[RMDB]
RNA sequence: GGGAACGACUCGAGUAGAGUCGAAAAGUCUCACGAGUGCAGAGACAAAGGUAGUUGACUCCGGCGCUACCAGUACUCGAAAGAAUGCGAAAGAGUUCACGUAUUCCAACCGGAGAAGAACUCAAAACCAUUACUGGAUCUUCGGAUCCAGUAAUGGAAAAGAAACAACAACAACAAC
Reactivity to 2A3 in 0.01 (KOAc 150mM, MgCl2 10mM, bicine 150mM(pH8.5), 24C), signal-to-noise 6, nucleotides 027 to 126: g040u010c000u010c000a040c030g020a010g010u050g030c070a000g070a010g040a300c130a110a080a010g020g010u010a000g010u060u190g020a040c000u010c000c000g000g030c020g010c010u000a010c000c000a000g010u010a000c010u000c010g020a020a050a030g100a020a060u130g070c050g050a060a090a130g030a060g000u010u010c020a010c090g060u050a130u100u130c060c030a060a080c000c010g010g000a000g000a010a030g010a000a010c010u000c000a030a020a020a030
Reactivity to DMS in 0.01 (KOAc 150mM, MgCl2 10mM, bicine 150mM(pH8.5), 24C), signal-to-noise 2, nucleotides 027 to 126: g000u000c000u010c000a300c080g000a000g000u000g050c040a160g050a220g030a200c200a040a150a090g000g000u000a000g000u030u020g000a150c010u000c010c000g010g000c050g000c000u010a000c000c010a030g000u000a000c050u000c000g000a060a150a170g040a110a040u040g020c000g020a020a040a050g010a000g030u000u020c000a300c090g000u030a050u000u010c060c190a020a130c000c010g000g000a020g040a300a040g000a000a050c000u040c010a110a020a040a140